[RMDB]
RNA sequence: GGGAACGACUCGAGUAGAGUCGAAAAUAGAACCGGAAUUUUUAAUAGGAAGAGCCGGAAGAGGUAUGGCAGAGGCUGAAAGCCCUGUCGUCGAUGCUUAUAAUGGUUCUCCUGAGUAGAGUCUUUGAUUAAUAUUUGGGUUCGCCCAAAUAUUAAUAAAAGAAACAACAACAACAAC
Reactivity to DMS in 0.01 (KOAc 150mM, MgCl2 10mM, bicine 150mM(pH8.5), 24C), signal-to-noise 3, nucleotides 027 to 126: u020a100g010a180a200c010c010g010g010a080a030u020u010u030u030u060a060a150u020a030g020g020a050a080g020a030g010c020c010g010g000a200a130g000a030g010g010u010a010u020g000g010c000a000g030a120g020g000c000u020g010a130a140a230g000c000c000c000u000g020u000c010g020u030c150g020a140u040g010c000u010u000a050u000a090a180u050g000g000u000u000c010u000c000c010u020g000a140g000u010a060g000a080g010u010c000u010u010u000g010
Reactivity to 2A3 in 0.01 (KOAc 150mM, MgCl2 10mM, bicine 150mM(pH8.5), 24C), signal-to-noise 2, nucleotides 027 to 126: u150a020g040a030a030c060c030g020g060a050a040u090u100u160u180u190a300a140u300a070g000g040a030a090g000a030g000c000c010g010g040a050a070g030a050g010g070u240a010u120g000g000c010a000g040a110g080g000c040u170g270a170a060a010g000c000c000c000u000g010u000c030g000u040c060g040a010u090g020c000u040u040a060u040a140a050u090g010g000u000u000c020u030c000c000u020g070a070g030u080a040g020a010g060u000c000u000u010u020g020